[RMDB]
RNA sequence: GGGAACGACUCGAGUAGAGUCGAAAAUGCGGAUGCCAUUGCAGAUUUUUUACGGGAUGAGCGCCCUCAUAUCCUGGCCUAUCAGCAAGAGGCGCGAUCACUACUGCCCUUUCGGCAAGCGCAGAGCGCCAUCCCUUAUCUUCGGAUAAGGGAUGGCAAAAGAAACAACAACAACAAC
Reactivity to DMS in 0.01 (KOAc 150mM, MgCl2 10mM, bicine 150mM(pH8.5), 24C), signal-to-noise 4, nucleotides 027 to 126: u000g000c040g020g000a270u000g000c010c020a110u000u000g000c030a080g000a030u000u000u010u030u010u010a160c230g010g010g010a050u010g010a060g020c040g000c030c020c020u000c040a070u000a090u020c160c020u010g010g010c210c100u000a090u020c070a040g010c180a090a100g010a040g020g010c070g020c040g010a060u010c040a060c030u000a110c060u000g000c010c150c140u000u000u010c120g010g010c030a040a040g000c070g010c020a070g000a150g010c160
Reactivity to 2A3 in 0.01 (KOAc 150mM, MgCl2 10mM, bicine 150mM(pH8.5), 24C), signal-to-noise 4, nucleotides 027 to 126: u070g000c020g150g120a030u040g000c010c010a030u080u050g000c020a020g110a200u130u130u050u040u080u300a110c160g070g000g020a030u050g040a050g070c010g010c080c060c000u010c020a120u160a080u150c010c010u020g060g000c000c080u300a290u250c010a020g050c030a130a090g000a020g040g000c000g010c000g020a010u040c010a030c140u140a050c020u040g000c030c070c000u040u150u110c030g010g010c000a000a010g110c000g000c010a010g020a040g070c060
Chemical mapping of a 177-nucleotide RNA with DMS and 2A3. For 2A3, 4,328 sequencing reads were counted. For 2A3 the reverse transcriptase was SuperScript II with manganese. The RNA was probed in 150 mM KOAc, 10 mM MgCl2 and 150 mM bicine (pH 8.5) at 24 C.